[RMDB]
RNA sequence: GGGAACGACUCGAGUAGAGUCGAAAAAGGGAUCCCCGCUUUAAUAUGUUGCUGCAGGGGGCGCUGUAACAAAAAGGGAGAACAAGUUGGUAUGUCAAGACCAGGCCUAAAGCCUGAUCUUACAGGGUCAUCAGGGUGUUUUCGAACACCCUGAUGAAAAAGAAACAACAACAACAAC
Reactivity to DMS in 0.01 (KOAc 150mM, MgCl2 10mM, bicine 150mM(pH8.5), 24C), signal-to-noise 2, nucleotides 027 to 126: a050g050g020g030a060u010c020c010c010c080g000c170u010u000u010a050a110u020a040u010g010u010u000g020c000u020g020c040a180g000g000g010g000g010c110g060c000u000g000u000a030a080c190a050a020a040a110a110g000g010g000a090g040a190a110c130a100a060g020u000u000g000g030u020a020u020g000u000c100a020a000g000a010c040c000a000g000g020c000c090u060a080a030a180g010c000c000u000g000a020u000c000u000u010a020c080a060g030g020g000
Reactivity to 2A3 in 0.01 (KOAc 150mM, MgCl2 10mM, bicine 150mM(pH8.5), 24C), signal-to-noise 2, nucleotides 027 to 126: a000g120g000g000a050u010c000c020c000c000g010c030u140u100u010a170a110u260a060u160g060u020u050g010c030u010g020c090a110g000g030g080g000g000c020g000c000u030g020u100a110a030c010a020a040a000a010a000g030g060g000a070g000a010a020c030a070a050g000u030u040g040g020u150a100u060g010u020c050a010a010g000a000c000c010a010g020g000c020c100u240a090a000a000g000c000c010u000g000a000u000c000u000u000a000c010a010g100g030g040